An RNA of 177 nucleotides, treated with DMS and read out base by base. The reactions ran in a buffer of 150 mM KOAc, 10 mM MgCl2 and 150 mM bicine (pH 8.5), at 24 C. The data come from the RNA Mapping Database (RMDB), library TTRINS.

RNA sequence: GGGAACGACUCGAGUAGAGUCGAAAAGAUAUGGAAACGUGGCCAAUGCAUCUCGAGGAUCUAUCGUAACAUCUUCUCGGAAACGAGAAGUGGAUAGGGAGAGAUGUUGGCCACGUUUCCUAAGUCACUAUGUGAGAAGGUUCGCCUUCUCACAUAGAAAAGAAACAACAACAACAAC
Reactivity to DMS in 0.01 (KOAc 150mM, MgCl2 10mM, bicine 150mM(pH8.5), 24C), signal-to-noise 3, nucleotides 027 to 126: g020a050u000a300u030g000g000a000a000a010c010g040u000g000g010c000c000a060a110u020g010c040a010u000c000u000c000g010a110g010g010a040u000c000u000a000u000c010g000u020a060a120c210a040u030c000u000u000c000u000c000g000g000a130a070a240c010g010a000g000a010a000g050u000g020g000a010u000a000g000g010g010a050g010a020g000a010u000g030u000u000g000g000c010c000a000c000g000u000u010u000c000c010u000a010a070g020u010c030a250